[RMDB]
RNA sequence: GGGAACGACUCGAGUAGAGUCGAAAAUCUCGCAAGUUCGCUUGCGAGAGUAAUAAAUAAAAUGGGUUCAACUCCCCCCCUUUUGCGAGGGUAUCGGAAACCGUACAAACGGCUUCGGCCGUUUGAACACACAGACAAUAUUCGUAUUGUCUGUGUGAAAAGAAACAACAACAACAAC
Reactivity to DMS in 0.01 (KOAc 150mM, MgCl2 10mM, bicine 150mM(pH8.5), 24C), signal-to-noise 7, nucleotides 027 to 126: u000c000u000c000g030c000a010a000g010u000u010c240g030c000u000u000g010c000g000a010g000a010g010u010a060a080u000a070a090a080u000a040a030a080a090u010g010g000g010u000u000c080a120a300c110u000c020c000c010c060c000c010c020u000u000u010u010g010c170g000a020g000g000g010u010a050u010c090g010g000a080a050a070c120c070g010u010a150c010a000a010a010c000g000g000c010u000u010c190g020g000c000c010g010u000u000u000g000a090a190
Reactivity to 2A3 in 0.01 (KOAc 150mM, MgCl2 10mM, bicine 150mM(pH8.5), 24C), signal-to-noise 4, nucleotides 027 to 126: u000c000u000c000g000c000a000a000g020u090u100c160g030c140u010u010g000c000g000a000g010a000g000u010a010a140u060a040a060a030u180a020a090a010a100u100g040g010g010u080u070c030a040a060c090u060c020c000c010c010c000c000c040u000u060u060u060g020c010g000a010g010g010g020u050a070u060c000g000g030a070a030a020c050c000g000u030a040c020a000a000a000c010g000g000c000u040u070c140g080g020c000c000g000u000u010u000g000a000a000